Conditions: 150 mM KOAc, 10 mM MgCl2 and 150 mM bicine (pH 8.5), 24 C. The record gives the reactivity of an RNA of 177 nucleotides to DMS and 2A3. 2A3 adducts were read by reverse transcription with SuperScript II with manganese.

[RMDB]
RNA sequence: GGGAACGACUCGAGUAGAGUCGAAAAGCUGCCUCUGACGUCCUUAAGGGUGGUAAAGCGGGUCUCCCCCGGAAACGGGGACGCGCCUGGCGCUAGCACGGGUAUGCGUGGAGGUCGACCCUGGCCGAGCUCGUACCAUAUUCGUAUGGUACGAGCUAAAAGAAACAACAACAACAAC
Reactivity to DMS in 0.01 (KOAc 150mM, MgCl2 10mM, bicine 150mM(pH8.5), 24C), signal-to-noise 2, nucleotides 027 to 126: g000c010u000g010c030c010u010c040u000g020a100c070g000u010c030c040u000u010a110a160g000g000g030u010g000g010u010a030a100a240g000c040g000g000g020u000c060u010c020c000c000c010c010g000g000a010a100a160c100g020g000g000g010a030c130g000c110g010c000c000u010g000g020c040g000c200u010a060g000c040a080c060g000g000g010u020a060u010g020c020g000u000g010g010a020g010g010u000c080g000a050c020c000c000u000g000g020c020c090g000
Reactivity to 2A3 in 0.01 (KOAc 150mM, MgCl2 10mM, bicine 150mM(pH8.5), 24C), signal-to-noise 1, nucleotides 027 to 126: g020c000u020g020c000c000u000c020u050g110a020c030g070u050c050c000u100u150a140a160g080g040g010u070g020g050u060a110a030a010g040c040g010g000g010u000c050u050c010c000c040c000c030g040g010a070a040a000c020g000g000g010g010a000c030g030c040g020c000c000u040g080g020c030g060c070u050a030g040c030a020c100g020g030g030u090a070u290g030c030g000u020g000g030a020g020g000u050c060g030a130c000c010c020u000g020g070c000c040g000